[RMDB]
RNA sequence: GGGAACGACUCGAGUAGAGUCGAAAACUUCCAGCGUUCGCGCUGGAAGAAAGGCCGAGUAGUGUUGGGUCGCGAAAGGCCAUAAAUCAACAAUCACUCUGAAAAUCGGUAUCUUCGGAUACCGAAACAUUAUAAAGCAGUUCGCUGCUUUAUAAUGAAAAGAAACAACAACAACAAC
Reactivity to DMS in 0.01 (KOAc 150mM, MgCl2 10mM, bicine 150mM(pH8.5), 24C), signal-to-noise 6, nucleotides 027 to 126: c010u000u000c000c000a000g020c010g030u000u010c210g030c010g050c000u000g010g020a000a010g000a040a080a090g010g010c010c000g000a050g010u000a080g000u000g020u010u000g010g010g030u010c020g020c030g000a150a160a160g000g000c000c010a050u000a020a070a090u010c110a070a080c120a080a080u010c130a060c080u000c050u000g000a070a050a090a120u000c000g000g010u000a000u000c000u000u010c160g020g000a010u000a000c000c000g010a010a020a090
Reactivity to 2A3 in 0.01 (KOAc 150mM, MgCl2 10mM, bicine 150mM(pH8.5), 24C), signal-to-noise 5, nucleotides 027 to 126: c000u000u010c000c010a000g010c010g050u070u090c170g010c010g000c080u020g000g000a000a000g000a010a020a000g000g000c010c010g000a010g000u020a010g000u000g110u140u190g220g080g030u180c020g000c010g030a050a010a010g000g000c000c000a000u010a010a020a010u090c030a010a090c030a040a090u150c030a060c120u130c070u150g080a060a070a060a210u030c010g000g000u000a000u000c010u030u030c140g070g000a000u000a000c000c000g000a000a000a000